[RMDB]
RNA sequence: GGGAACGACUCGAGUAGAGUCGAAAACCCACGACUUUCGAGUCGUGGGAAAUAUAAUCAGCGGUAAAUAAUUAGCUCGGCUUACCGCUGAAGCGGAGCAUACACGUCUAGGAUUCGUCCUAGACAAUGGAGUAAGAAUAUUCGUAUUCUUACUCCAAAAAGAAACAACAACAACAAC
Reactivity to DMS in 0.01 (KOAc 150mM, MgCl2 10mM, bicine 150mM(pH8.5), 24C), signal-to-noise 7, nucleotides 027 to 126: c010c000c010a020c010g000a020c000u000u000u010c150g010a020g020u000c000g020u010g000g000g000a000a010a050u010a080u010a120a110u000c010a010g010c000g010g010u000a010a020a090u000a070a090u000u010a110g020c030u000c030g000g000c080u000u000a050c020c000g000c000u000g000a010a030g010c080g010g010a040g030c040a170u010a100c200a090c190g010u000c000u000a000g010g000a030u000u010c190g000u000c000c000u000a000g000a000c010a030a030
Reactivity to 2A3 in 0.01 (KOAc 150mM, MgCl2 10mM, bicine 150mM(pH8.5), 24C), signal-to-noise 5, nucleotides 027 to 126: c000c000c000a000c010g000a000c020u060u110u150c180g130a000g000u000c000g000u010g000g000g000a010a100a000u180a010u030a030a200u030c000a010g000c000g100g140u120a030a090a060u100a070a150u200u150a070g000c020u020c060g090g020c020u010u020a070c000c000g000c000u000g000a000a000g030c030g080g020a010g030c010a030u110a160c090a040c190g000u000c010u020a010g000g000a000u010u040c160g030u020c050c000u000a000g000a000c000a000a010